[RMDB]
An RNA of 177 nucleotides, treated with 2A3 and DMS and read out base by base. For 2A3, 2,183 sequencing reads were counted. 2A3 adducts were read by reverse transcription with SuperScript II with manganese.
RNA sequence: GGGAACGACUCGAGUAGAGUCGAAAAACAGAGCGAAGGGGGGACGGAGAAGGCUAUGUUGGCCGCGCGACGGUUGUCCCGGUUUAAGCGUGUAGGCUGGUUUUCCAGGCAAAUCCGGAAAAAGAAAGACUAAGUUAGUGUUCGCACUAACUUAGUCAAAAGAAACAACAACAACAAC
Reactivity to 2A3 in 0.01 (KOAc 150mM, MgCl2 10mM, bicine 150mM(pH8.5), 24C), signal-to-noise 1, nucleotides 027 to 126: a000c010a010g040a000g030c050g040a030a080g000g000g050g000g000g000a000c030g020g010a040g000a060a050g060g000c000u040a040u250g090u060u070g090g000c000c030g000c000g000c020g040a110c010g000g030u030u080g070u090c000c020c000g030g000u090u090u050a060a020g010c020g020u050g040u070a030g060g000c010u000g000g000u000u060u100u030c020c000a040g010g010c010a080a050a010u030c020c020g080g000a010a040a040a040a000g090a010a060a000
Reactivity to DMS in 0.01 (KOAc 150mM, MgCl2 10mM, bicine 150mM(pH8.5), 24C), signal-to-noise 4, nucleotides 027 to 126: a070c070a090g010a070g000c030g020a050a070g000g010g000g000g000g010a060c060g010g010a080g000a070a080g010g010c040u000a040u000g020u000u000g000g010c020c010g010c050g020c050g000a080c040g010g000u000u010g010u000c100c000c010g010g010u010u000u000a050a110g020c030g010u010g010u000a070g010g010c020u000g000g000u000u000u000u000c010c020a130g010g010c070a060a060a090u000c030c010g000g000a050a040a030a080a090g010a100a100a130